[RMDB]
RNA sequence: GGGAACGACUCGAGUAGAGUCGAAAAACGUAAUCCUUCUUUAAAAGGAUUUGAUAACAAUGCGUUCAUAGCGAUCCUUACAACGUAGAUAAGAUUAAUGAUGCGCAGCGCCGGAUUGCGCCACCGGUAUUUAUAUGCAGUUCGCUGCAUAUAAAUAAAAAGAAACAACAACAACAAC
Reactivity to 2A3 in 0.01 (KOAc 150mM, MgCl2 10mM, bicine 150mM(pH8.5), 24C), signal-to-noise 9, nucleotides 027 to 126: a000c040g040u040a010a010u000c020c000u030u040c090u090u300u240a180a290a010a020g000g010a000u040u030u110g140a120u110a130a040c090a120a080u080g020c000g020u030u060c040a030u070a040g070c050g050a040u040c020c000u050u040a040c050a160a040c120g130u110a030g050a190u090a120a040g030a050u100u140a080a070u180g070a060u170g030c020g000c050a060g030c020g010c050c010g020g010a050u040u170g030c030g010c020c000a020c000c000g000g010
Reactivity to DMS in 0.01 (KOAc 150mM, MgCl2 10mM, bicine 150mM(pH8.5), 24C), signal-to-noise 9, nucleotides 027 to 126: a080c090g010u020a020a010u000c000c000u000u000c140u030u030u050a110a100a020a020g000g010a010u000u010u010g010a100u030a100a110c180a070a090u010g010c010g010u000u010c050a040u010a100g000c130g010a040u010c050c020u000u000a060c120a090a090c180g020u020a060g000a150u020a050a060g000a090u000u010a060a050u010g000a040u020g010c020g000c010a040g020c220g010c030c020g000g000a090u030u010g010c050g010c090c150a040c020c010g010g000